[RMDB]
RNA sequence: GGGAACGACUCGAGUAGAGUCGAAAAGCUAGCAAACUGUCAGGAGAUGGACCGUCAAUGAUGUGCUAAGUUCUAGUUGCACAUGACACUUAACCACUAUUGGUAUGUUUCUUGAUCUGUAAAAUGGGAAAUAUACUAGAUCUUAACAUCUAUAACACGCAAAGUUAAAUUUCGAUUUAACUUUGCGAAAAGAAACAACAACAACAAC
Reactivity to 2A3 in 0.01 (KOAc 150mM, MgCl2 10mM, bicine 150mM(pH8.5), 24C), signal-to-noise 9, nucleotides 027 to 156: g030c040u080a000g030c050a040a030a080c030u040g030u060c030a030g000g060a050g020a050u050g010g030a030c030c030g030u040c030a040a090u090g030a040u020g030u020g020c030u070a050a050g030u090u050c050u070a030g050u060u090g000c020a020c010a040u040g010a010c030a000c060u090u120a080a040c020c010a040c090u130a120u110u110g020g000u060a060u050g020u010u020u010c020u030u060g060a060u020c020u030g070u130a050a060a080a100u070g020g010g030a010a060a010u070a010u000a020c030u020a020g010a030u010c000u060u070a060a030c020a040u020c040u140a100u050a190a050c100a010
Reactivity to DMS in 0.01 (KOAc 150mM, MgCl2 10mM, bicine 150mM(pH8.5), 24C), signal-to-noise 4, nucleotides 027 to 156: g000c060u000a110g020c070a070a080a070c040u000g000u000c050a120g000g000a100g070a090u000g010g010a070c030c040g000u010c050a080a090u010g000a070u000g030u010g020c040u000a040a090g030u000u000c060u000a140g020u000u000g020c080a120c080a090u000g010a060c070a070c080u010u000a050a030c020c020a060c060u000a120u010u010g000g020u000a090u000g010u000u000u000c020u000u000g010a070u000c060u000g000u000a000a050a070a100u010g010g010g020a050a050a070u000a120u000a050c040u000a050g000a030u000c040u000u020a100a090c030a050u000c050u000a110u000a060a120c080a130